About this RNA: An RNA of 207 nucleotides, treated with 2A3 and read out base by base. 2A3 adducts were read by reverse transcription with SuperScript II with manganese. Values cover nucleotides 27 to 156.

[RMDB]
RNA sequence: GGGAACGACUCGAGUAGAGUCGAAAAUGUGGAAUCUGGUAGGUUUGCUUAUGUUAACGGAGUAAGGAAUGGUGAUGCUUCAUCAUUUAUAUCUGGCGUAGUUGGUGCUGGCGCUCAUGUUGAUUGGAGGAAUAGAGCCUGUGGUUUAAUGGUUGAAGCAAUAAGGGUCAUUCGUGACCCUUAUUGCAAAAGAAACAACAACAACAAC
Reactivity to 2A3 in 0.01 (KOAc 150mM, MgCl2 10mM, bicine 150mM(pH8.5), 24C), signal-to-noise 2, nucleotides 027 to 156: u060g050u020g000g060a080a040u060c020u040g080g010u110a060g040g080u090u080u010g030c040u210u090a110u180g050u070u020a090a020c030g000g040a010g040u080a050a080g060g000a040a050u040g000g020u030g030a060u090g170c010u080u010c000a060u000c000a070u010u080u040a230u010a050u120c070u050g020g000c020g040u040a040g070u030u060g000g010u010g000c010u050g030g000c040g000c000u030c060a090u030g000u020u030g050a090u090u120g020g020a050g000g030a040a090u150a030g040a020g070c000c000u030g000u010g020g060u030u030u090a010a070u120g000g020u000u000g030a080a040